[RMDB]
RNA sequence: GGGAACGACUCGAGUAGAGUCGAAAAAAGUGAUUAUUCGUAAUCACUUCACGCCGGGCGCGGUGGCGCGUGCCUGUAGUCCCAGCUAGUCGGGAGGCUAAACGACGUACCCGUUCGCGGGUACGAAGGAAAUGUGUUAGUUCGCUAACACAUUUCCAAAAGAAACAACAACAACAAC
Reactivity to 2A3 in 0.01 (KOAc 150mM, MgCl2 10mM, bicine 150mM(pH8.5), 24C), signal-to-noise 2, nucleotides 027 to 126: a000a010g010u010g010a030u010u030a020u020u130c200g060u070a020a000u010c010a000c000u040u050c070a080c050g000c000c000g010g000g000c000g000c000g010g000u000g000g000c000g000c010g000u010g000c000c000u020g040u070a030g020u000c000c000c000a000g010c010u080a120g190u190c030g000g000g000a010g020g000c040u060a100a080a040c100g110a000c000g000u000a000c010c010c010g020u030u060c300g000c000g060g000g010u010a000c000g010a020a010
Reactivity to DMS in 0.01 (KOAc 150mM, MgCl2 10mM, bicine 150mM(pH8.5), 24C), signal-to-noise 3, nucleotides 027 to 126: a010a000g010u000g000a020u010u000a040u000u010c180g020u000a010a010u000c000a010c000u000u000c100a090c140g000c020c010g000g000g000c000g000c010g010g010u000g010g000c010g000c000g020u000g010c020c010u010g020u000a040g000u000c000c000c000a040g010c020u000a090g000u000c110g010g010g010a060g000g010c000u010a030a080a120c150g010a210c020g010u000a000c000c000c000g020u010u010c210g010c030g000g000g000u010a000c000g010a070a100
Chemical mapping of a 177-nucleotide RNA with 2A3 and DMS. The 2A3 profile rests on 6,497 reads. For 2A3 the reverse transcriptase was SuperScript II with manganese. The RNA was probed in 150 mM KOAc, 10 mM MgCl2 and 150 mM bicine (pH 8.5) at 24 C.